Structure probing data (2A3) for a 207-nucleotide construct. High 2A3 reactivity points to a flexible backbone, as in loops and unpaired stretches. Values cover nucleotides 27 to 156. Conditions: 150 mM KOAc, 10 mM MgCl2 and 150 mM bicine (pH 8.5), 24 C.
RNA sequence: GGGAACGACUCGAGUAGAGUCGAAAAAGCAAAGCAGGGAGACACCUUCAGAAGAAGCUUGUCUGAGCUUCACCGCAGCUCCCACCACGCGGCGCUUCAGUACGGCUGGAUCCUCCGCAGGCGAGCGGAAGGCCCCCAGGAGGAGCAGGCUGGUGGCGAAUGCACUGCUAUUCGUAGCAGUGCAUUCAAAAGAAACAACAACAACAAC
Reactivity to 2A3 in 0.01 (KOAc 150mM, MgCl2 10mM, bicine 150mM(pH8.5), 24C), signal-to-noise 2, nucleotides 027 to 156: a000g060c070a030a000a010g020c130a130g020g020g020a040g010a020c090a100c070c040u080u080c070a150g050a230a020g010a010a000g040c050u120u100g110u170c160u260g040a010g000c000u010u000c000a010c030c130g070c050a040g010c020u010c030c000c000a050c060c010a030c120g050c000g000g030c050g050c020u060u030c020a050g060u110a070c030g050g010c060u010g010g060a100u070c020c000u030c010c020g050c020a030g050g040c060g110a110g020c050g120g030a070a040g090g010c010c000c030c010c030a030g000g020a010g010g000a020g000c020a000g000g090c020u040g010g080u010g030g000c050